[RMDB]
RNA sequence: GGGAACGACUCGAGUAGAGUCGAAAAGAUAUGGAAUCGCUGUGGAGCUCCUCGGAAACGAGAGAGCUAUGAAGCAGGAUUCCUAAGUCAAAAUCGCUUCCCUAAUGUUCGCAUUAGGGAAGCGAAACUUGAUAACUGUCUUCGGACAGUUAUCAAGAAAAGAAACAACAACAACAAC
Reactivity to 2A3 in 0.01 (KOAc 150mM, MgCl2 10mM, bicine 150mM(pH8.5), 24C), signal-to-noise 2, nucleotides 027 to 126: g030a020u040a070u180g000g030a020a000u010c070g000c300u010g030u030g020g030a010g010c010u000c000c010u000c000g010g010a080a060a070c030g020a010g000a020g020a000g050c010u030a190u030g010a010a010g000c010a000g000g000a000u010u000c000c010u000a080a010g070u040c040a030a000a010a260u020c010g000c000u000u000c010c000c000u000a000a010u010g040u060u070c300g000c170a000u000u010a000g050g000g000a000a000g020c000g000a000a000a000
Reactivity to DMS in 0.01 (KOAc 150mM, MgCl2 10mM, bicine 150mM(pH8.5), 24C), signal-to-noise 2, nucleotides 027 to 126: g010a060u000a300u010g000g020a000a000u010c000g030c000u010g010u000g000g010a020g030c000u000c010c000u000c000g000g020a070a090a220c020g000a000g000a180g000a000g000c000u000a030u010g000a090a240g000c000a010g010g000a010u010u010c000c000u000a040a050g000u010c060a080a040a130a100u000c000g000c010u000u000c010c000c000u000a010a000u000g010u000u020c200g030c010a000u010u000a010g020g000g000a020a000g000c000g000a000a020a040